The record gives the reactivity of an RNA of 177 nucleotides to 2A3 and DMS. For DMS, 2,279 sequencing reads were counted. Conditions: 150 mM KOAc, 10 mM MgCl2 and 150 mM bicine (pH 8.5), 24 C. Reactivities are given for positions 27 through 126. The 2A3 profile rests on 1,730 reads. The data come from the RNA Mapping Database (RMDB), library OK2TRN.
RNA sequence: GGGAACGACUCGAGUAGAGUCGAAAACAAAGCCCCAGUCACCCAUAUUGCUGUGGAAAACGUCACACCACUCGUCGAGGAGAUCACUGAGCCUCUGCCCGAGAAACAUGAUAGGGAGAUAUACUCAGAGUGGAGGUAUAUUCGUAUACCUCCACUCAAAAGAAACAACAACAACAAC
Reactivity to 2A3 in 0.01 (KOAc 150mM, MgCl2 10mM, bicine 150mM(pH8.5), 24C), signal-to-noise 2, nucleotides 027 to 126: c040a010a080a000g020c010c000c010c030a000g020u040c020a060c020c010c020a050u040a110u140u150g030c050u020g000u080g000g030a040a070a020a050c040g050u040c060a040c000a030c090c020a050c020u000c020g070u040c040g000a030g000g040a020g040a050u050c010a010c060u050g040a030g020c000c000u000c060u050g090c000c000c000g080a060g000a070a090a010c060a050u180g030a050u160a050g020g120g040a030g020a000u150a010u010a080c010u030c010a000
Reactivity to DMS in 0.01 (KOAc 150mM, MgCl2 10mM, bicine 150mM(pH8.5), 24C), signal-to-noise 3, nucleotides 027 to 126: c120a080a140a150g030c060c020c010c050a070g000u000c040a080c040c030c030a110u020a060u010u020g030c080u000g010u020g010g000a070a050a050a100c090g020u000c040a040c100a090c000c020a090c050u000c030g020u010c120g010a120g030g010a060g000a100u000c030a060c160u010g000a080g010c040c030u000c020u000g000c000c020c010g000a070g000a090a080a070c100a070u000g000a100u010a090g000g010g010a060g010a080u010a070u010a090c060u000c100a130